[RMDB]
RNA sequence: GGGAACGACUCGAGUAGAGUCGAAAAGCGUACUACAGAGGGAAAGUGAAGCAUCGAUCGUACACUAAGUACCGUCCCAAAUAGGACGGGAACUGUGUACGGGAGCUUCAUAACACUCUGUAUCGCAAAUCUGCAGAGAACUUCGGUUCUCUGCAGAGACUCAUCACUCGUUCGCGAGUGAUGAGUCAAAAGAAACAACAACAACAAC
Reactivity to 2A3 in 0.01 (KOAc 150mM, MgCl2 10mM, bicine 150mM(pH8.5), 24C), signal-to-noise 2, nucleotides 027 to 156: g000c000g050u110a040c080u000a000c010a000g000a020g040g020g070a040a190a150g090u020g010a010a010g000c030a300u220c050g120a070u040c000g030u000a000c000a000c000u020a000a000g000u000a010c000c010g010u010c050c060c050a110a210a220u300a060g000g000a000c000g010g040g010a000a000c010u020g000u000g000u000a000c000g010g020g000a000g000c020u000u000c010a010u090a080a000c040a010c000u000c000u010g000u000a000u010c000g000c000a060a060a060u010c010u010g000c000a000g010a010g000a000a000c000u070u140c220g140g000u030u020c000u010c000u010g000c010a000g000a000
Chemical mapping of a 207-nucleotide RNA with 2A3. 2A3 adducts were read by reverse transcription with SuperScript II with manganese. For 2A3, 1,571 sequencing reads were counted. Conditions: 150 mM KOAc, 10 mM MgCl2 and 150 mM bicine (pH 8.5), 24 C. As a SHAPE reagent, 2A3 marks flexible, mostly unpaired nucleotides at the ribose 2'-OH.